This 177-nucleotide RNA was probed chemically with 2A3 and DMS. The reactions ran in a buffer of 150 mM KOAc, 10 mM MgCl2 and 150 mM bicine (pH 8.5), at 24 C. DMS adducts were read by reverse transcription with MarathonRT. Reactivities are given for positions 27 through 126. 2A3 adducts were read by reverse transcription with SuperScript II with manganese. The 2A3 profile rests on 926 reads. For DMS, 1,841 sequencing reads were counted. The data come from the RNA Mapping Database (RMDB), library OK1LIB.
RNA sequence: GGGAACGACUCGAGUAGAGUCGAAAAGAUGAUGCAGAGACUAUCAUUGCAGUGUCUUCCAUUUGUGAUGAGAGAAAUGAAAAUUGUGAUGAAGAGGCUGUAAAAAGAGCUAAAGAGCUUGAAAAAGAGGGACUAGCAUAUUCGUAUGCUAGUCCCUAAAAGAAACAACAACAACAAC
Reactivity to 2A3 in 0.01 (KOAc 150mM, MgCl2 10mM, bicine 150mM(pH8.5), 24C), signal-to-noise 2, nucleotides 027 to 126: g110a070u170g000a010u060g030c070a020g000a000g070a280c000u090a110u100c010a010u000u040g000c000a000g000u030g110u140c040u100u010c040c020a140u060u160u100g160u110g070a130u120g000a050g020a010g020a140a150a030u160g110a030a180a020a000u040u000g060u010g000a040u030g000a000a040g000a000g050g020c000u000g000u000a010a000a000a010a000g000a000g030c000u030a260a140a000g100a020g030c010u090u000g080a120a000a000a050a000g150
Reactivity to DMS in 0.01 (KOAc 150mM, MgCl2 10mM, bicine 150mM(pH8.5), 24C), signal-to-noise 1, nucleotides 027 to 126: g020a110u010g050a050u020g000c000a000g000a050g010a090c030u020a040u030c010a010u020u000g000c050a010g000u000g010u050c030u010u010c000c000a030u000u010u040g040u070g010a300u000g000a120g000a010g000a050a050a080u020g000a070a080a130a010u000u030g060u010g000a020u010g020a080a120g060a080g000g000c050u020g000u000a000a120a050a030a080g000a000g000c010u010a170a050a030g010a140g060c020u000u020g000a050a060a030a060a080g020